About this RNA:
Chemical mapping of a 170-nucleotide RNA with 2A3 and DMS. DMS adducts were read by reverse transcription with MarathonRT.
[RMDB]
RNA sequence: GGGAACGACUCGAGUAGAGUCGAAAAUUAGCAUGCUAUAAUGGUCGUCCGACUGGUACAUUCACUGUUGUAAUGCGCCCUAACUACACAAUUAAGGGUUCCUUUCUGUGUGGUUCUUGUGGUAGUGGAACGCGUUAGUUCGCUAACGCGAAAAGAAACAACAACAACAAC
Reactivity to 2A3 in 0.01 (KOAc 150mM, MgCl2 10mM, bicine 150mM(pH8.5), 24C), signal-to-noise 7, nucleotides 027 to 129: u080u050a000g030c030a040u060g020c020u080a020u060a220a110u140g050g030u040c040g030u000c050c030g070a120c080u110g070g010u090a050c030a100u030u110c030a000c100u040g020u120u020g070u080a060a050u050g030c010g020c000c010c000u000a000a010c010u030a010c030a000c000a070a190u090u060a070a020g110g100g000u170u300c010c000u000u030u060c010u010g000u000g000u000g020g010u060u010c050u120u120g030u110g030g040u020a100g040u080g070g020a030a010
Reactivity to DMS in 0.01 (KOAc 150mM, MgCl2 10mM, bicine 150mM(pH8.5), 24C), signal-to-noise 5, nucleotides 027 to 129: u000u000a080g040c050a040u030g000c060u040a090u030a040a030u000g020g030u010c140g020u050c070c030g040a090c170u060g040g000u050a060c010a080u040u030c020a000c030u020g010u000u000g020u030a010a010u030g030c090g000c040c020c040u040a040a020c060u000a040c030a000c000a040a030u050u020a060a050g000g030g090u010u070c000c000u000u010u060c050u000g050u070g020u030g010g000u000u000c170u000u010g040u000g010g010u030a060g000u030g020g020a100a110